[RMDB]
RNA sequence: GGGAACGACUCGAGUAGAGUCGAAAAGAAGCAGCUGACGAGCUGCGAAAACAGCCGGGCAAGUGGUCCAGGUCGAAGUUGCAGCGGAUCGAGACGCGUGAUCAGAAGGUCAAGUAUCGCGAAGUCGAGCAACUACUUGAUCUCUACGAGGUUACGGAUUCUGAAAAGAUUUCGAUCUUUUCAGAAUAAAAGAAACAACAACAACAAC
Reactivity to DMS in 0.01 (KOAc 150mM, MgCl2 10mM, bicine 150mM(pH8.5), 24C), signal-to-noise 3, nucleotides 027 to 156: g010a140a200g010c010a050g000c050u000g000a130c140g020a190g040c000u000g010c010g000a040a040a080a090c050a090g010c030c020g030g000g010c050a130a120g030u000g030g030u000c020c040a070g040g030u000c040g010a090a210g040u000u000g000c030a100g000c030g020g010a120u000c010g000a110g020a070c000g010c010g000u010g020a030u000c010a100g010a120a090g000g010u000c010a040a040g010u000a020u010c090g010c010g000a100a110g040u000c100g020a190g010c030a050a050c070u000a040c040u000u000g000a030u010c010u000c020u010a110c070g020a150g030g020u000u000a060c050g000g010
Reactivity to 2A3 in 0.01 (KOAc 150mM, MgCl2 10mM, bicine 150mM(pH8.5), 24C), signal-to-noise 5, nucleotides 027 to 156: g090a080a020g010c020a000g000c000u120g090a080c060g080a040g010c000u000g000c000g010a020a010a000a020c010a000g050c000c020g000g030g020c060a170a110g110u060g070g000u090c040c050a090g000g040u070c060g050a070a020g020u070u050g010c020a030g030c020g040g000a040u050c040g010a030g010a050c040g010c020g050u020g000a010u020c010a040g120a200a010g030g000u000c000a000a000g000u010a010u080c050g000c040g120a130a020g150u270c060g030a020g030c030a050a040c030u030a010c010u010u010g000a000u000c010u000c000u040a040c070g100a050g030g020u030u040a010c030g030g010